This 177-nucleotide RNA was probed chemically with 2A3 and DMS.
The 2A3 profile rests on 5,898 reads.
2A3 adducts were read by reverse transcription with SuperScript II with manganese.
Conditions: 150 mM KOAc, 10 mM MgCl2 and 150 mM bicine (pH 8.5), 24 C.
The data come from the RNA Mapping Database (RMDB), library OK2TRN.
[RMDB]
RNA sequence: GGGAACGACUCGAGUAGAGUCGAAAAGAAAGGCAGCAAGUGCAGCCCACGCAGCGGCAUGCUUUUGCAUGCCCAGUCGAGCCCACGACUUAGGGCAGCUGCGACACUGAGGGCAGCUGCCGAAAGAAAUAGCUAUAGGGUUCGCCCUAUAGCUAUUAAAAGAAACAACAACAACAAC
Reactivity to 2A3 in 0.01 (KOAc 150mM, MgCl2 10mM, bicine 150mM(pH8.5), 24C), signal-to-noise 4, nucleotides 027 to 126: g070a020a080a010g010g000c000a010g000c030a160a150g130u150g150c070a040g040c000c010c010a020c040g050c030a010g000c050g050g000c030a030u030g010c010u150u280u210u300g000c010a010u010g000c000c000c010a010g000u010c010g010a030g000c010c000c010a020c010g050a010c040u040u140a070g010g060g030c020a020g000c010u020g000c020g020a010c060a030c100u160g080a190g010g030g000c010a010g000c010u000g000c010c000g010a000a010a000g020a010
Reactivity to DMS in 0.01 (KOAc 150mM, MgCl2 10mM, bicine 150mM(pH8.5), 24C), signal-to-noise 6, nucleotides 027 to 126: g000a100a130a180g000g020c010a030g020c020a140a120g030u010g020c170a080g010c010c020c050a170c120g020c080a060g020c110g020g000c020a020u000g000c010u000u000u010u020g020c000a060u000g000c000c000c060a030g000u000c010g000a140g010c010c000c000a300c040g010a030c030u010u010a100g010g000g010c120a110g010c010u000g000c000g010a130c130a120c200u010g010a100g000g010g020c010a120g000c000u000g020c000c000g000a020a070a100g000a110